[RMDB]
RNA sequence: GGGAACGACUCGAGUAGAGUCGAAAAGAUAUGGAAUGUCGACGAUCAACCAUCCGAUGAAAUCGGAAACGAUGGAGGAUGCGUUGGGAGACAUUCCUAAGUCAAAAUCGCGCCUUCGGGCGCGAAAGAUUCAUGGAUACUUCGGUAUCCAUGAAUCAAAAGAAACAACAACAACAAC
Reactivity to 2A3 in 0.01 (KOAc 150mM, MgCl2 10mM, bicine 150mM(pH8.5), 24C), signal-to-noise 2, nucleotides 027 to 126: g020a000u100a010u190g010g010a020a010u030g010u020c000g010a300c000g030a120u030c010a010a000c010c000a000u030c010c010g180a300u060g000a010a050a040u010c020g020g000a050a060a000c030g000a000u010g080g000a000g000g010a020u020g080c150g080u010u010g000g000g000a030g000a020c000a000u010u000c000c010u010a090a020g020u000c000a030a010a000a270u080c000g010c000g030c060c030u030u100c280g000g020g000c000g000c000g000a000a000a000
Reactivity to DMS in 0.01 (KOAc 150mM, MgCl2 10mM, bicine 150mM(pH8.5), 24C), signal-to-noise 2, nucleotides 027 to 126: g000a040u000a300u000g000g000a020a000u000g000u020c000g040a110c240g000a120u000c020a000a010c010c010a010u020c000c030g020a090u000g020a070a120a040u000c000g000g010a200a040a100c010g000a000u000g000g010a070g010g000a030u000g000c180g020u000u010g010g030g000a060g010a020c000a020u000u000c020c010u010a000a070g000u010c030a070a070a070a120u010c010g000c010g000c000c000u000u020c190g040g000g030c010g020c000g030a000a030a040